Chemical mapping of a 207-nucleotide RNA with 2A3.
RNA sequence: GGGAACGACUCGAGUAGAGUCGAAAAACUGACGGUACGCCGUCAGAACGGUAGAAAAGAUGGUUUGAAAACCACGCCUUCUACCAAUAUAGUAAAUAAAUAGGCGGAGCCGUCAUACGUGACCGCAAAAACAUCCUUGGCUUCGGCCAAGGAUGAACUCUUCAAAGAUCUUCGGAUCUUUGAAGAGAAAAGAAACAACAACAACAAC
Reactivity to 2A3 in 0.01 (KOAc 150mM, MgCl2 10mM, bicine 150mM(pH8.5), 24C), signal-to-noise 1, nucleotides 027 to 156: a030c020u020g000a030c000g000g000u030a020c150g040c000c000g010u000c000a000g010a020a000c040g000g030u000a000g030a000a010a040a010g010a150u020g040g130u020u110u300g250a240a190a000a000c000c000a000c010g060c000c030u000u000c000u000a000c000c000a000a010u070a000u020a020g090u050a000a100a300u090a050a120a040u100a050g000g050c020g010g000a010g020c010c020g000u020c000a000u100a120c030g040u010g010a070c000c000g000c040a000a000a000a100a070c000a020u000c000c000u000u000g020g000c000u030u030c200g110g000c000c000a000a000g000g000a000u000g000a000a000
The data come from the RNA Mapping Database (RMDB), library M2RFOK.